[RMDB]
RNA sequence: GGGAACGACUCGAGUAGAGUCGAAAAGCAAAGCACAUGAAGCACAUGAAGCACAUGAAGCACAUGAAGCACUUGAAGCACAUGAAGCACAUGAAGCACAUGAAGCACAUGAAGCACAUGAAAAAAACACGUAUACCUAGUUCGCUAGGUAUACGUGAAAAGAAACAACAACAACAAC
Reactivity to DMS in 0.01 (KOAc 150mM, MgCl2 10mM, bicine 150mM(pH8.5), 24C), signal-to-noise 3, nucleotides 027 to 126: g000c030a050a080a120g020c020a180c020a020u000g000a060a100g010c040a230c040a020u000g010a080a110g030c020a190c010a030u000g000a080a090g020c040a220c070a020u000g000a080a110g030c050a030c060u000u010g000a130a060g000c030a190c020a040u000g020a010a070g010c020a160c020a000u000g010a060a120g030c040a190c050a050u000g000a060a070g020c040a130c040a010u010g000a100a130g010c020a110c080a060u010g000a000a000a090a070a040a100a180
Reactivity to 2A3 in 0.01 (KOAc 150mM, MgCl2 10mM, bicine 150mM(pH8.5), 24C), signal-to-noise 5, nucleotides 027 to 126: g090c040a070a030a000g030c030a020c000a060u040g060a130a020g000c010a020c010a040u030g040a110a020g020c020a010c000a060u010g050a120a020g000c000a000c000a050u030g060a120a020g010c010a030c090u160u200g120a150a010g000c010a010c010a050u030g040a100a030g000c010a010c010a030u000g040a090a030g000c010a020c000a040u030g050a130a010g010c010a030c000a050u030g030a080a020g050c020a010c020a130u160g160a060a040a030a000a000a020a020
An RNA of 177 nucleotides, treated with DMS and 2A3 and read out base by base. The reactions ran in a buffer of 150 mM KOAc, 10 mM MgCl2 and 150 mM bicine (pH 8.5), at 24 C.